[RMDB]
This 177-nucleotide RNA was probed chemically with DMS. For DMS the reverse transcriptase was MarathonRT.

RNA sequence: GGGAACGACUCGAGUAGAGUCGAAAAGAUAUGGAUGCACGGUGACGAGAUUUGGGACAUGAUCGAUCAUUCGGAAACGAAUGACCGAUCAACAGCCCACUGAUCUCGUCACCGUGCAUCCUAAGUCCACCUAUAGAUGGUUCGCCAUCUAUAGGUGAAAAGAAACAACAACAACAAC
Reactivity to DMS in 0.01 (KOAc 150mM, MgCl2 10mM, bicine 150mM(pH8.5), 24C), signal-to-noise 5, nucleotides 027 to 126: g010a080u010a300u000g000g010a010u000g020c000a010c010g000g020u010g010a010c000g010a020g000a020u000u000u010g010g000g020a050c100a270u000g010a010u000c000g000a030u000c000a000u000u000c010g010g000a110a100a270c000g010a010a000u000g010a010c000c000g010a010u010c000a020a040c300a200g000c000c000c000a070c300u010g000a000u000c000u000c000g000u000c000a000c000c000g000u000g000c000a010u000c000c000u000a000a030g010u000c060